[RMDB]
RNA sequence: GGGAACGACUCGAGUAGAGUCGAAAAGCUGGGCACCGUCAGUCGUCAGAAGCGUAUCUAGGUCAGUUGCCGUGAAGGUGUGUUUUGGUGGGAUGUAUGCCGACGUGACAGUCAGCGCCGUUCCACGGACACGAAAGCUUUUCGAAGCUUUCGUGUCAAAAGAAACAACAACAACAAC
Reactivity to DMS in 0.01 (KOAc 150mM, MgCl2 10mM, bicine 150mM(pH8.5), 24C), signal-to-noise 2, nucleotides 027 to 126: g030c070u000g000g000g020c070a120c140c020g010u050c090a050g000u000c080g000u000c020a140g000a050a140g010c010g000u000a020u000c040u000a050g010g050u000c030a050g050u060u010g000c010c000g050u030g010a100a080g000g000u020g030u000g010u020u000u000u020g010g050u000g000g000g000a000u010g000u000a050u010g020c000c000g010a000c000g000u000g010a220c140a230g000u010c010a040g000c000g020c160c010g000u010u030c000c000a000c030g000
Reactivity to 2A3 in 0.01 (KOAc 150mM, MgCl2 10mM, bicine 150mM(pH8.5), 24C), signal-to-noise 2, nucleotides 027 to 126: g020c040u050g020g000g000c010a040c100c000g080u060c040a050g030u020c040g040u010c030a020g030a130a000g050c010g030u030a070u060c040u100a090g070g000u070c020a040g040u130u070g050c000c010g060u080g100a090a020g130g040u150g000u000g040u030u000u060u110g090g020u010g000g000g000a020u030g040u050a160u130g010c000c030g000a020c030g020u060g080a040c030a000g000u000c010a010g010c000g080c020c020g000u040u010c000c000a000c000g020
Background:
The record gives the reactivity of an RNA of 177 nucleotides to DMS and 2A3. For 2A3 the reverse transcriptase was SuperScript II with manganese. For DMS, 2,697 sequencing reads were counted.